[RMDB]
Chemical mapping of a 177-nucleotide RNA with DMS. The DMS profile rests on 711 reads.
RNA sequence: GGGAACGACUCGAGUAGAGUCGAAAAUUUCUCCUAUUCGUAGGAGAAAGAAGCACCACCCGGGAGGGUUAAGGCCAUACGGACAGCCGGGUCCACUGCCGAUAAGGGCUGAGUUCGCUCAGCCCAAUUCGAAGUCAGUUUUCGAACUGACUUCGAAAAAAGAAACAACAACAACAAC
Reactivity to DMS in 0.01 (KOAc 150mM, MgCl2 10mM, bicine 150mM(pH8.5), 24C), signal-to-noise 1, nucleotides 027 to 126: u000u000u010c000u000c010c000u010a020u000u010c090g000u000a020g000g000a000g010a010a020a010g020a110a020g000c200a070c060c090a120c010c000c020g000g020g010a120g020g000g040u020u000a020a100g010g010c010c070a090u000a100c160g000g010a030c040a090g020c040c060g010g000g040u030c000c020a210c040u010g000c010c010g000a150u000a120a090g000g020g020c010u010g010a010g040u000u010c180g010c040u010c000a000g010c010c000c000a010a010
The data come from the RNA Mapping Database (RMDB), library M2PK50.
The RNA was probed in 150 mM KOAc, 10 mM MgCl2 and 150 mM bicine (pH 8.5) at 24 C.